[RMDB]
RNA sequence: GGGAACGACUCGAGUAGAGUCGAAAAGACUGCGUGCACUAGAGACGAUAUCGAGCCGGAAAUUAAUCGAUAAUGUCUCCAGUAGUGGAUACGAUCCGGCAAGUAUCGACUACCUGUGCUCGUAGGAGCGAUGCACGCAUUUCGAUGCGUGCAUCGCAAAAGAAACAACAACAACAAC
Reactivity to 2A3 in 0.01 (KOAc 150mM, MgCl2 10mM, bicine 150mM(pH8.5), 24C), signal-to-noise 2, nucleotides 027 to 126: g000a040c000u000g000c000g020u020g000c010a010c000u070a000g000a020g000a000c000g000a000u000a000u060c000g000a020g000c000c020g030g120a030a060a000u280u240a120a070u150c050g000a020u020a180a260u130g020u000c000u000c000c020a110g030u090a030g090u050g050g000a000u000a080c010g000a040u000c000c000g000g070c030a050a020g000u000a010u000c000g050a000c010u050a180c000c040u000g020u000g020c000u000c000g000u000a000g030g000a030